RNA sequence: GGGAACGACUCGAGUAGAGUCGAAAAAGGAUAACUUCACAGCUGCUGGUUAUACCACACUAGAGGCUGUGGUGCACGUGAACCAGGAGGACCUGGCAAGAAUUGGUAUCACAGCCAUCACGCACCAUGAUGCUACCAAGUUCGCUUGGUAGCAUCAAAAAGAAACAACAACAACAAC
Reactivity to 2A3 in 0.01 (KOAc 150mM, MgCl2 10mM, bicine 150mM(pH8.5), 24C), signal-to-noise 2, nucleotides 027 to 126: a030g060g030a060u040a030a010c030u090u060c050a010c010a080g060c080u100g100c000u040g010g000u040u000a050u080a180c000c030a040c000a020c060u090a080g020a030g150g010c000u000g000u010g010g000u000g000c070a070c100g060u000g030a090a060c010c010a030g000g030a080g100g140a270c000c000u000g000g020c010a060a000g020a120a050u120u140g020g000u020a000u030c000a000c000a010g000c000c010a020u030c000a020c030g000c000a020c030c000a040
Reactivity to DMS in 0.01 (KOAc 150mM, MgCl2 10mM, bicine 150mM(pH8.5), 24C), signal-to-noise 2, nucleotides 027 to 126: a040g000g010a090u010a050a030c080u010u010c090a090c060a090g000c080u010g020c060u000g000g000u000u000a120u000a140c080c020a090c140a030c040u000a080g020a080g020g020c010u000g010u000g010g000u000g010c020a060c160g000u010g000a170a060c010c020a010g000g000a300g050g030a140c060c010u000g010g010c050a030a090g000a090a070u000u000g010g000u000a010u000c060a030c020a030g010c000c000a020u010c040a100c090g000c050a110c050c040a080